[RMDB]
RNA sequence: GGGAACGACUCGAGUAGAGUCGAAAACAUUUUGAACAGCUAUUUGGUGAGAGUCUGAAUUUUAUUUUUUAUUUCUGCUUUUUGGUCUUCUGCCAUUUUUCCUAUCCUUUACUAAAUUCAAGCAGCUGCCAUAUUAGCUUUUCUUUGCUUGGGUAUACGUACCUAUCGAGUUCGCUCGAUAGGUACGAAAAGAAACAACAACAACAAC
Reactivity to 2A3 in 0.01 (KOAc 150mM, MgCl2 10mM, bicine 150mM(pH8.5), 24C), signal-to-noise 2, nucleotides 027 to 156: c000a030u160u160u080u230g030a050a000c010a030g030c010u060a050u180u090u050g040g000u060g070a120g010a020g040u010c030u010g010a010a010u050u090u040u070a120u060u190u060u060u040u050a110u060u200u050c030u040g110c050u260u150u010u060u080g030g000u070c000u150u010c020u180g000c030c000a090u000u040u050u050u010c050c000u060a130u130c010c000u070u170u140a170c080u240a040a150a100u140u060c060a060a000g060c020a020g020c070u030g060c010c020a050u040a090u290u040a060g010c000u070u030u040u030c020u080u050u060g010c020u000u050g030g050g110u140a050u090a100
An RNA of 207 nucleotides, treated with 2A3 and read out base by base. Reactivities are given for positions 27 through 156. The 2A3 profile rests on 492 reads. The RNA was probed in 150 mM KOAc, 10 mM MgCl2 and 150 mM bicine (pH 8.5) at 24 C.